[RMDB]
RNA sequence: GGGAACGACUCGAGUAGAGUCGAAAAUCUGUCUGUCCCCGCCCUGCUCUCCGCAGAGCUUCAAGCCUUCUUCUGUUUUCCAGUCAGAGCUGGCAGGGGGAAAAAAAGGGAAAACAGCCCAGGAAGCAGUAGACAGAAUAUUCGUAUUCUGUCUACUAAAAGAAACAACAACAACAAC
Reactivity to DMS in 0.01 (KOAc 150mM, MgCl2 10mM, bicine 150mM(pH8.5), 24C), signal-to-noise 6, nucleotides 027 to 126: u030c020u000g000u000c040u030g000u010c010c010c000c070g000c020c010c010u000g000c020u010c060u010c130c180g010c130a070g010a050g010c010u010u030c130a100a160g020c040c020u010u000c010u020u000c020u000g010u010u010u010u010c080c120a140g010u010c030a050g000a070g020c050u000g010g010c000a070g000g000g000g000g010a000a000a030a040a060a060a090g010g000g010a080a050a130a030c030a030g000c110c010c020a170g010g010a080a090g010c190
Reactivity to 2A3 in 0.01 (KOAc 150mM, MgCl2 10mM, bicine 150mM(pH8.5), 24C), signal-to-noise 9, nucleotides 027 to 126: u040c010u030g060u000c030u060g140u070c010c000c000c000g050c000c010c010u020g010c000u020c010u060c080c070g070c090a030g010a020g020c000u070u100c100a110a030g000c010c010u010u010c010u050u010c000u030g060u040u080u120u060c040c000a040g030u060c010a010g040a020g050c020u020g010g010c010a030g040g000g010g010g080a030a000a000a000a020a010a100g030g000g000a040a060a000a010c010a010g020c020c020c000a020g060g070a070a020g030c080